Notes
An RNA of 177 nucleotides, treated with DMS and 2A3 and read out base by base. For 2A3, 1,151 sequencing reads were counted. The DMS profile rests on 3,957 reads. Values cover nucleotides 27 to 126. The RNA was probed in 150 mM KOAc, 10 mM MgCl2 and 150 mM bicine (pH 8.5) at 24 C.
[RMDB]
RNA sequence: GGGAACGACUCGAGUAGAGUCGAAAAAUCGGCCCGUUCGCGGGCCGAUACAGGCGGUGGCUCGCACCUAGCGACCGGCGCAAGGACGCACGGUACUGCGAAUUGACUGUGGAUUCGUCCACAGUAAUAAAAUAAUGGACUUCGGUCCAUUAUUUUAAAAAGAAACAACAACAACAAC
Reactivity to DMS in 0.01 (KOAc 150mM, MgCl2 10mM, bicine 150mM(pH8.5), 24C), signal-to-noise 4, nucleotides 027 to 126: a040u000c010g020g000c020c000c010g040u010u020c170g020c020g030g000g010c000c000g010a000u000a010c120a080g000g010c030g000g030u000g010g010c080u010c070g010c010a080c060c050u000a120g010c020g000a040c020c020g010g000c020g010c040a150a120g010g000a130c030g010c010a070c030g000g010u010a060c080u000g040c030g010a100a100u010u010g000a040c000u000g020u000g000g000a040u000u010c190g010u000c000c010a010c000a010g000u000a030a070
Reactivity to 2A3 in 0.01 (KOAc 150mM, MgCl2 10mM, bicine 150mM(pH8.5), 24C), signal-to-noise 1, nucleotides 027 to 126: a000u010c000g010g010c000c020c010g020u030u050c190g000c050g120g000g000c000c000g010a000u020a010c000a000g140g010c050g120g150u050g040g000c060u000c070g020c020a050c000c050u050a020g030c000g060a030c020c000g000g000c010g000c040a170a190g200g020a130c040g000c080a130c070g010g080u110a130c040u170g040c000g070a070a060u110u200g100a000c010u000g000u000g000g020a010u020u050c140g060u010c030c000a010c000a000g000u010a010a030